[RMDB]
RNA sequence: GGGAACGACUCGAGUAGAGUCGAAAAAGUUAGGUUCGCUAUGGUGCAACUCUUUAAGGCAAUAACGAACUAAUUCUAAGCAAGUAAUGGAGAAAUGCCAGGGUCACUAUCAAGCCAUAAUAGUGCUGUAAGUGACUUAGAUUCGUCUAAGUCACAAGACUUACCGGAUGUUCGCAUCCGGUAAGUCAAAAGAAACAACAACAACAAC
Reactivity to DMS in 0.01 (KOAc 150mM, MgCl2 10mM, bicine 150mM(pH8.5), 24C), signal-to-noise 1, nucleotides 027 to 156: a080g010u000u010a040g040g000u000u000c060g010c020u000a010u010g090g080u020g030c000a080a090c050u020c090u000u000u000a110a100g000g010c030a080a040u000a000a050c020g020a020a070c050u010a000a100u020u010c060u000a100a110g050c010a040a100g040u020a050a080u020g010g000a130g050a020a070a150u000g010c050c050a040g000g060g010u000c080a040c080u000a070u010c060a040a080g010c010c060a090u010a060a060u000a110g020u020g010c050u000g030u000a050a120g000u000g010a040c010u000u000a010g000a100u000u000c300g070u010c010u010a000a020g000u000c000a020c000a080a140
Reactivity to 2A3 in 0.01 (KOAc 150mM, MgCl2 10mM, bicine 150mM(pH8.5), 24C), signal-to-noise 3, nucleotides 027 to 156: a000g090u110u040a100g000g050u040u040c030g000c010u010a020u090g140g000u160g060c030a090a230c070u080c110u200u160u190a150a060g010g000c020a030a050u050a040a040c030g010a010a000c020u020a040a000u100u120c060u110a070a030g050c040a070a030g020u120a070a090u120g060g010a050g030a090a110a030u040g020c020c020a010g020g000g000u050c010a000c060u010a010u090c040a040a030g020c010c000a020u030a120a050u060a070g070u060g060c060u040g060u110a180a050g000u020g000a000c000u000u000a000g000a010u010u050c120g020u000c170u000a000a000g020u000c000a000c000a000a000